[RMDB]
RNA sequence: GGGAACGACUCGAGUAGAGUCGAAAAUGCGCGCCGUCAAACCAUCGAAGGCAGUUACGAAAUUCUCGAACAACGUGUCCAGCAACUUGAAAAUCAGGUGAUUGGUAUGCGGGCGCUACGAGAAAGCUAGCGAACAUAGGUUCGCCUAUGUUCGCUAAAAAGAAACAACAACAACAAC
Reactivity to DMS in 0.01 (KOAc 150mM, MgCl2 10mM, bicine 150mM(pH8.5), 24C), signal-to-noise 4, nucleotides 027 to 126: u000g000c050g010c020g030c010c000g010u010c140a080a090a070c050c030a030u000c080g030a210a140g010g020c030a070g020u020u010a070c070g000a040a150a140u000u000c030u000c000g000a300a180c050a040a050c030g000u010g000u000c020c020a100g020c140a120a030c040u000u000g000a140a090a140a100u000c030a060g000g000u000g020a080u010u010g010g000u000a060u000g020c000g000g000g000c020g000c010u010a020c040g010a040g010a020a100a100g010c130
Reactivity to 2A3 in 0.01 (KOAc 150mM, MgCl2 10mM, bicine 150mM(pH8.5), 24C), signal-to-noise 4, nucleotides 027 to 126: u050g000c030g030c110g180c040c020g070u120c040a110a100a040c030c010a050u070c040g040a040a020g020g020c040a020g030u050u090a050c020g000a020a050a140u080u010c030u020c020g020a080a020c030a010a040c060g060u020g040u040c020c010a020g030c020a030a040c000u020u080g080a150a180a160a280u180c000a000g050g010u040g070a070u090u150g030g000u100a060u120g010c000g000g000g010c010g000c020u020a020c020g020a010g020a030a050a030g050c050
Structure probing data (DMS and 2A3) for a 177-nucleotide construct. High DMS reactivity at an A or C suggests that its Watson-Crick edge is free. Source: RMDB library OK2TST, as collected in RNAgym. 2A3 adducts were read by reverse transcription with SuperScript II with manganese. Conditions: 150 mM KOAc, 10 mM MgCl2 and 150 mM bicine (pH 8.5), 24 C.